[RMDB]
RNA sequence: GGGAACGACUCGAGUAGAGUCGAAAAGCUGGCAAGGAUGAUAAAUACUUGCCCUCACUUAGAUAAUAGUUCAUUGAUGAGAGCAUUGUUCUGAGCCAGUAAAGUCAGUGUCGUUCGCGACACUGACGAAUCUAGCGAUCUUCGGAUCGCUAGAUUCAAAAGAAACAACAACAACAAC
Reactivity to 2A3 in 0.01 (KOAc 150mM, MgCl2 10mM, bicine 150mM(pH8.5), 24C), signal-to-noise 3, nucleotides 027 to 126: g020c010u010g000g000c020a020a020g020g000a020u040g020a030u160a110a230a020u190a100c050u010u010g000c000c000c000u000c000a020c000u050u060a070g030a050u070a190a100u090a240g210u090u020c050a050u070u150g070a180u030g000a160g000a000g000c020a010u030u080g040u090u000c000u020g020a020g020c010c000a020g020u060a060a080a000g010u000c000a000g010u000g000u010c020g010u010u060c170g010c010g070a000c000a000c010u000g000a010c000
Reactivity to DMS in 0.01 (KOAc 150mM, MgCl2 10mM, bicine 150mM(pH8.5), 24C), signal-to-noise 4, nucleotides 027 to 126: g040c020u000g010g020c010a110a210g020g000a020u000g000a160u010a080a110a160u010a150c110u010u000g010c000c010c000u010c000a020c010u000u000a140g000a030u000a050a160u000a150g030u010u000c010a300u010u000g000a140u000g010a020g000a010g020c000a040u000u000g000u010u000c000u000g000a300g010c020c010a020g000u000a070a040a150g000u010c000a000g000u000g010u000c020g000u000u010c220g020c010g010a020c000a000c000u000g010a000c010
An RNA of 177 nucleotides, treated with 2A3 and DMS and read out base by base. The DMS profile rests on 2,504 reads. The reactions ran in a buffer of 150 mM KOAc, 10 mM MgCl2 and 150 mM bicine (pH 8.5), at 24 C. The data come from the RNA Mapping Database (RMDB), library RFMREP. The 2A3 profile rests on 5,090 reads. High DMS reactivity at an A or C suggests that its Watson-Crick edge is free.